Source: RMDB library RFMREP, as collected in RNAgym. The record gives the reactivity of an RNA of 177 nucleotides to DMS. For DMS the reverse transcriptase was MarathonRT. The reactions ran in a buffer of 150 mM KOAc, 10 mM MgCl2 and 150 mM bicine (pH 8.5), at 24 C.

RNA sequence: GGGAACGACUCGAGUAGAGUCGAAAAGAAUGGGGACAGUUCGCUGUCCCCAUUCAAAGUUUCAAUCCCCUCGCGGGGAUUUUGGUUUUUUGAAGAAAAGAACUAGAAAGGUUCGCCUUUCUAGUUCCAUUAGAACGUUGUUCGCAACGUUCUAAUGAAAAGAAACAACAACAACAAC
Reactivity to DMS in 0.01 (KOAc 150mM, MgCl2 10mM, bicine 150mM(pH8.5), 24C), signal-to-noise 2, nucleotides 027 to 126: g000a000a000u000g010g000g020g010a030c000a020g020u000u020c190g030c010u000g010u000c000c010c000c000a000u000u000c000a030a090a170g000u000u000u000c020a060a030u000c000c000c000c000u010c300g020c300g030g000g010g010a000u010u020u010u000g000g010u000u000u000u000u000u000g010a100a160g010a070a050a050a130g010a000a010c000u010a010g010a000a020a020g000g000u000u020c260g010c010c000u000u010u000c000u000a000g010u000u000c000